Structure probing data (DMS and 2A3) for a 177-nucleotide construct. For 2A3 the reverse transcriptase was SuperScript II with manganese. The data come from the RNA Mapping Database (RMDB), library OK2TRN. The RNA was probed in 150 mM KOAc, 10 mM MgCl2 and 150 mM bicine (pH 8.5) at 24 C. Reactivities are rounded to 0.1 and cut off at 0 and 3.
RNA sequence: GGGAACGACUCGAGUAGAGUCGAAAAGCUUUGCUUCAGACCCUUCUAUCAAAUUCCAUUGUCUCUGUCUUAAUGGUCUUUGCAGGGUAGGCAUGGCCAUCUGCAUGUUCACUGAAGGGCCUGCCUGCAAUAGUUGAUGUUUCGACAUCAACUAUUGAAAAGAAACAACAACAACAAC
Reactivity to DMS in 0.01 (KOAc 150mM, MgCl2 10mM, bicine 150mM(pH8.5), 24C), signal-to-noise 9, nucleotides 027 to 126: g010c030u010u010u010g010c010u000u000c050a100g000a100c010c010c010u010u000c070u010a150u010c070a040a060a060u000u000c020c010a040u000u000g010u010c110u010c130u010g000u010c100u000u000a030a030u000g010g010u000c040u000u000u000g010c190a070g000g010g020u010a040g010g010c010a050u010g020g010c020c040a070u000c050u000g000c050a050u000g000u000u000c120a110c140u000g010a050a060g010g000g010c000c000u000g000c010c000u000g010
Reactivity to 2A3 in 0.01 (KOAc 150mM, MgCl2 10mM, bicine 150mM(pH8.5), 24C), signal-to-noise 9, nucleotides 027 to 126: g010c040u140u210u290g020c000u030u040c020a030g010a150c000c010c000u020u020c080u090a210u120c040a050a060a110u080u010c010c010a020u030u050g080u050c060u020c070u270g190u090c030u100u170a040a030u030g020g000u000c020u040u040u030g020c050a040g030g060g060u110a110g040g010c060a090u230g080g000c020c010a090u040c030u060g040c040a060u090g090u170u190c110a080c120u050g020a040a050g010g000g020c000c000u000g000c000c010u010g010